RNA sequence: GGGAACGACUCGAGUAGAGUCGAAAAUCGCUAAGCUUCGGCUUAGCGAAAAGUCGCGGCUUGAGGCCGUGUACGGCUGCGCACACACACGACCCUCAAGCCAAAGCAUCGUGUUCGCACGAUGCAAUCACUAUAUGUUGUUCGCAACAUAUAGUGAAAAAGAAACAACAACAACAAC
Reactivity to 2A3 in 0.01 (KOAc 150mM, MgCl2 10mM, bicine 150mM(pH8.5), 24C), signal-to-noise 7, nucleotides 027 to 126: u020c000g000c000u000a000a000g000c010u030u160c260g090g000c000u020u000a000g000c000g000a000a000a000a000g040u030c050g010c090g090g000c000u000u000g000a010g010g000c030c040g000u000g000u010a020c050g030g000c050u230g090c130g000c050a050c000a000c000a000c000a000c130g020a060c010c000c000u000c010a010a000g000c010c000a010a010a000g000c000a000u000c000g000u010g040u050u070c240g020c060a000c000g000a000u000g000c000a000a050
Reactivity to DMS in 0.01 (KOAc 150mM, MgCl2 10mM, bicine 150mM(pH8.5), 24C), signal-to-noise 9, nucleotides 027 to 126: u000c000g010c000u000a010a010g010c010u000u020c220g030g010c000u000u000a000g010c000g000a000a020a040a100g010u010c110g020c270g010g010c000u000u000g010a030g020g020c110c000g010u000g010u000a040c110g010g010c050u000g010c160g020c070a070c060a080c080a030c020a010c010g000a050c140c030c040u000c000a010a020g010c000c010a020a030a080g010c000a000u000c000g020u000g010u000u010c190g020c000a010c000g000a010u000g010c010a050a060